The record gives the reactivity of an RNA of 207 nucleotides to DMS and 2A3. For DMS the reverse transcriptase was MarathonRT. Values cover nucleotides 27 to 156. Source: RMDB library M2RFPK, as collected in RNAgym. The 2A3 profile rests on 3,622 reads.

RNA sequence: GGGAACGACUCGAGUAGAGUCGAAAAACACCAAAACUGAAAACGGAAGGCAAUCCUUCCACGACGGUACUUACUUUCCUUUGAUCGUCGUUACUACUGGCAUAGCCACAAAGGAGAACAAACAUGAGCGCGGACACUGACUUCGGUCAGUGUCCAAUCUCGUAAUCUACUUCGGUAGAUUACGAGAAAAAGAAACAACAACAACAAC
Reactivity to DMS in 0.01 (KOAc 150mM, MgCl2 10mM, bicine 150mM(pH8.5), 24C), signal-to-noise 1, nucleotides 027 to 156: a120c070a140c010c020a010a070a100a180c100u000g010a060a110a000a110c070g030g030a060a010g060g010c090a130a200u010c030c010u000u010c000c000a110c000g010a050c030g000g020u000a070c050u000u000a070c080u020u000u000c010c030u000u000u000g010a040u010c030g000u010c010g010u040u040a040c130u000a040c060u010g020g000c010a110u020a130g000c040c010a070c110a040a080a030g000g000a070g040a140a140c090a030a080a090c070a040u000g000a110g060c040g010c150g000g000a050c000a010c000u040g000a020c010u010u000c300g010g040u000c000a000g020u000g000u000c020c000a010a030
Reactivity to 2A3 in 0.01 (KOAc 150mM, MgCl2 10mM, bicine 150mM(pH8.5), 24C), signal-to-noise 5, nucleotides 027 to 156: a000c080a110c030c030a070a050a050a070c160u180g070a100a120a000a030c070g000g000a000a010g010g000c160a070a170u270c010c000u000u000c000c000a000c000g000a000c010g000g010u050a080c030u080u030a040c010u040u110u040c040c000u040u000u040g020a010u030c000g010u010c000g000u070u080a050c050u030a020c020u020g000g030c050a200u150a160g020c010c010a020c020a030a020a010g010g040a020g030a060a050c060a080a080a030c070a120u210g060a050g130c110g000c110g050g000a000c000a000c000u000g000a000c000u020u030c150g030g000u000c000a000g000u000g000u000c000c000a000a000